[RMDB]
RNA sequence: GGGAACGACUCGAGUAGAGUCGAAAACAGAAGAGCGUGAGUUCGUCAUAGACGCAUCGGGAUGUCCUCCGGGACAGAUCAUCACCCUUCGGCUCCCGAGGCCGUGGUCGCGCUGCUGGGGCCUCGAAUGAGCGGCCUGUUCACCGAGAGUGACGCAAACAUAAUAGCCUUUCGAGGCUAUUAUGUUAAAAGAAACAACAACAACAAC
Reactivity to 2A3 in 0.01 (KOAc 150mM, MgCl2 10mM, bicine 150mM(pH8.5), 24C), signal-to-noise 3, nucleotides 027 to 156: c090a020g090a100a020g070a050g050c070g010u030g020a080g060u120u120c030g050u030c040a110u090a170g070a040c030g030c060a070u080c050g020g000g000a050u070g030u040c000c010u020c040c070g010g000g010a020c010a050g020a040u090c040a040u070c040a090c030c020c000u080u080c070g040g000c010u020c030c000c020g010a010g000g000c000c020g300u030g000g030u040c040g030c030g000c170u070g000c000u020g000g010g010g080c000c000u010c010g030a090a120u210g010a020g040c010g000g040c000c010u040g020u090u120c080a110c050c030g070a060g010a000g200u110g020a020c050g030c090a060
Reactivity to DMS in 0.01 (KOAc 150mM, MgCl2 10mM, bicine 150mM(pH8.5), 24C), signal-to-noise 2, nucleotides 027 to 156: c030a130g020a060a040g010a060g000c050g020u010g010a120g020u000u000c050g040u000c040a130u000a100g000a070c030g030c040a110u010c040g020g000g010a150u000g020u000c020c020u020c110c190g050g020g030a100c030a040g020a040u000c030a160u000c050a050c000c010c020u010u000c020g010g020c000u000c000c060c020g010a040g000g000c030c030g040u000g000g020u000c090g010c200g030c000u010g050c050u000g000g010g020g000c010c000u000c000g000a050a110u000g010a110g000c020g000g030c030c020u000g000u000u010c040a100c020c020g000a110g010a140g030u010g010a080c020g020c080a190